The record gives the reactivity of an RNA of 177 nucleotides to DMS and 2A3. The RNA was probed in 150 mM KOAc, 10 mM MgCl2 and 150 mM bicine (pH 8.5) at 24 C. DMS adducts were read by reverse transcription with MarathonRT. 2A3 adducts were read by reverse transcription with SuperScript II with manganese. In probing experiments dimethyl sulfate is read out at A N1 and C N3, which are open when not base-paired.

[RMDB]
RNA sequence: GGGAACGACUCGAGUAGAGUCGAAAAACACGAAAUGGCGUCAUAUCGUUGACACUCCAAAAAAGACUGCAAAUUCCAAUUCGUUUCGGAAUACAGUCCGUCGACGAGAUGGGCGAUCGUCUAAUCUCGUAUCUUACUGCUUCGGCAGUAAGAUACGAAAAGAAACAACAACAACAAC
Reactivity to DMS in 0.01 (KOAc 150mM, MgCl2 10mM, bicine 150mM(pH8.5), 24C), signal-to-noise 1, nucleotides 027 to 126: a180c280a010c000g010a010a280a060u000g050g000c010g070u000c000a050u000a220u000c020g000u000u090g000a020c020a270c110u030c150c140a000a040a150a070a090a200g000a040c000u000g000c140a060a060a100u000u000c010c000a000a020u000u000c280g000u000u000u000c180g020g010a000a000u000a190c000a000g010u000c000c090g000u020c000g040a030c030g000a000g050a050u000g000g000g000c000g000a010u120c040g010u040c050u030a130a090u000c100u000
Reactivity to 2A3 in 0.01 (KOAc 150mM, MgCl2 10mM, bicine 150mM(pH8.5), 24C), signal-to-noise 4, nucleotides 027 to 126: a000c100a030c080g020a090a080a070u250g120g010c000g010u030c000a020u010a010u020c000g000u010u020g010a000c040a010c090u240c080c040a110a070a050a020a000a000g010a010c000u010g000c000a040a150a030u030u000c010c000a010a080u080u140c100g130u090u100u160c110g000g020a030a020u040a060c000a000g000u010c030c090g000u010c000g000a000c000g000a000g000a010u140g000g050g020c000g010a090u060c010g030u020c070u070a070a100u050c030u000